[RMDB]
Structure probing data (2A3 and DMS) for a 177-nucleotide construct. 2A3 adducts were read by reverse transcription with SuperScript II with manganese. For DMS the reverse transcriptase was MarathonRT. Conditions: 150 mM KOAc, 10 mM MgCl2 and 150 mM bicine (pH 8.5), 24 C.

RNA sequence: GGGAACGACUCGAGUAGAGUCGAAAAUCGCCAUGCCGGGUCCGGAGCCGAUGCCGCCGCCUCCGUCGUAUCCGAGAUAGUCGAGCGGAUGGUGGAAGUGCCACAGCUCGCCGCUCCAGCCGAGCGGCUGCGUGCUCUAAUUCGUUAGAGCACGCAGAAAAGAAACAACAACAACAAC
Reactivity to 2A3 in 0.01 (KOAc 150mM, MgCl2 10mM, bicine 150mM(pH8.5), 24C), signal-to-noise 1, nucleotides 027 to 126: u060c030g020c010c020a100u120g090c010c040g020g000g070u070c020c000g030g000a030g000c080c010g070a070u150g040c020c060g040c010c000g000c000c000u020c000c000g020u040c020g000u060a070u020c020c050g000a010g040a160u110a050g100u170c040g010a020g020c020g000g080a080u070g060g010u040g020g070a160a090g040u110g000c020c010a020c010a020g040c010u010c030g020c010c000g030c010u000c000c020a120g070c020c030g010a020g030c010g000g010
Reactivity to DMS in 0.01 (KOAc 150mM, MgCl2 10mM, bicine 150mM(pH8.5), 24C), signal-to-noise 3, nucleotides 027 to 126: u010c060g000c020c030a080u000g000c060c020g000g000g000u000c070c040g010g010a110g020c060c040g010a070u000g010c020c030g030c000c020g000c090c020u000c010c030g000u000c060g010u000a080u000c050c050g020a110g000a140u000a080g030u010c060g010a120g010c010g010g010a080u000g020g010u010g000g020a090a100g020u000g000c010c070a080c080a150g000c020u000c050g000c010c020g000c010u000c000c080a150g000c140c130g000a040g020c020g010g000